[RMDB]
Source information:
Structure probing data (DMS) for a 177-nucleotide construct.
RNA sequence: GGGAACGACUCGAGUAGAGUCGAAAAUGCCGUCCUUUAAUGCCAGGUGUCCUGCAGCCCAACAGGCUAUUAAAGAGGGGGAAGUGAGCUGUGUGUAGCGACAGGAUUCUGAAAGAGUGCGAACAUACCCAAGUGACGUAUUCGUACGUCACUUGGGAAAAGAAACAACAACAACAAC
Reactivity to DMS in 0.01 (KOAc 150mM, MgCl2 10mM, bicine 150mM(pH8.5), 24C), signal-to-noise 1, nucleotides 027 to 126: u000g010c030c040g000u000c050c050u000u000u000a030a100u000g000c040c040a050g020g010u000g000u020c010c030u000g020c070a150g000c020c020c040a120a130c150a090g010g000c030u000a030u000u000a040a030a130g000a190g040g020g020g040g000a060a010g020u000g000a060g000c040u010g030u000g020u000g030u000a000g010c040g000a030c070a020g000g020a120u010u000c060u010g000a090a040a140g000a020g000u000g000c040g000a070a090c060a070u000a170
The DMS profile rests on 861 reads. The data come from the RNA Mapping Database (RMDB), library OK2TRN. Conditions: 150 mM KOAc, 10 mM MgCl2 and 150 mM bicine (pH 8.5), 24 C.